[RMDB]
RNA sequence: GGGAACGACUCGAGUAGAGUCGAAAAAGUGGACGAUACAUUACACCGAGCAAUUAAAUUACGGUCCACGCUCGGCCAUUAUUCUGGCGAGAGCCAGUUCACAGACAGCUAGCGAAAGGAAGGACCUAGCAGGAAGGAAGGAGCUAGCGCUAGGGCAAGUACGGAGUACUUUCGAGUACUCCGUACUAAAAGAAACAACAACAACAAC
Reactivity to DMS in 0.01 (KOAc 150mM, MgCl2 10mM, bicine 150mM(pH8.5), 24C), signal-to-noise 2, nucleotides 027 to 156: a140g030u000g000g010a060c010g020a220u000a050c100a140u000u000a130c080a150c040c060g000a070g060c040a140a130u010u000a080a060a180u000u000a070c020g030g000u000c000c050a080c100g040c060u010c010g000g020c030c050a090u000u000a070u000u000c050u010g010g020c000g000a170g000a220g020c000c010a080g020u000u010c030a070c050a190g000a050c060a050g010c010u000a030g030c020g050a080a070a080g000g010a090a070g020g030a090c070c010u010a050g010c030a100g040g000a090a100g010g020a070a090g000g000a090g020c020u000a030g010c040g010c030u030a060g010g010g030c130a050
Reactivity to 2A3 in 0.01 (KOAc 150mM, MgCl2 10mM, bicine 150mM(pH8.5), 24C), signal-to-noise 5, nucleotides 027 to 156: a000g040u020g000g000a020c050g050a080u130a150c090a130u150u110a070c100a030c060c010g020a010g000c010a040a140u130u150a210a120a070u180u110a160c110g070g010u010c000c050a020c040g010c000u000c000g030g010c020c010a080u160u170a060u130u060c030u010g000g000c000g020a070g010a000g040c010c000a000g020u090u090c100a070c030a060g100a040c030a010g030c020u040a010g020c050g110a150a050a030g050g030a040a040g040g000a030c000c000u000a000g000c030a020g010g090a060a020g030g010a010a030g020g030a040g010c020u030a010g010c000g000c030u020a000g020g040g000c050a030

Notes:
The record gives the reactivity of an RNA of 207 nucleotides to DMS and 2A3. The reactions ran in a buffer of 150 mM KOAc, 10 mM MgCl2 and 150 mM bicine (pH 8.5), at 24 C. The data come from the RNA Mapping Database (RMDB), library OK3TST. For 2A3 the reverse transcriptase was SuperScript II with manganese. For DMS, 3,698 sequencing reads were counted. Values cover nucleotides 27 to 156.